RNA sequence: GGGAACGACUCGAGUAGAGUCGAAAACUCUGUUCCUUUGCAAGGUCCAGACAAUUCGUACUAAGACUCUUAAAGCUAUUGGACCGAAGGAACCUCACGACCAUGUGCAGCUGUCAAACGUACGAAAAUUAUACUGCGCCUUCGGGCGCAGUAUAAUAAAAGAAACAACAACAACAAC
Reactivity to DMS in 0.01 (KOAc 150mM, MgCl2 10mM, bicine 150mM(pH8.5), 24C), signal-to-noise 2, nucleotides 027 to 126: c090u040c020u040g000u000u010c010c000u000u030u070g000c060a090a060g010g000u000c000c000a010g050a110c220a060a060u000u000c000g020u010a040c090u030a090a040g010a130c000u040c110u020u030a090a110a130g000c010u000a080u000u000g000g000a030c000c000g030a000a050g010g010a040a000c030c180u040c090a090c130g000a110c060c030a100u040g000u010g000c140a000g010c040u050g000u000c010a030a050a190c170g010u000a010c030g000a020a020a110
Reactivity to 2A3 in 0.01 (KOAc 150mM, MgCl2 10mM, bicine 150mM(pH8.5), 24C), signal-to-noise 3, nucleotides 027 to 126: c010u020c030u010g010u010u000c000c000u010u040u080g050c060a100a040g010g010u000c040c010a020g040a050c050a050a080u050u020c000g020u030a000c020u060a090a090g010a070c030u080c000u180u250a240a290a040g040c060u120a180u110u090g000g000a010c000c010g020a010a000g060g010a010a050c040c050u080c000a050c010g170a120c060c030a140u110g020u050g120c060a060g000c010u020g000u050c040a110a050a010c030g030u030a000c000g000a060a000a000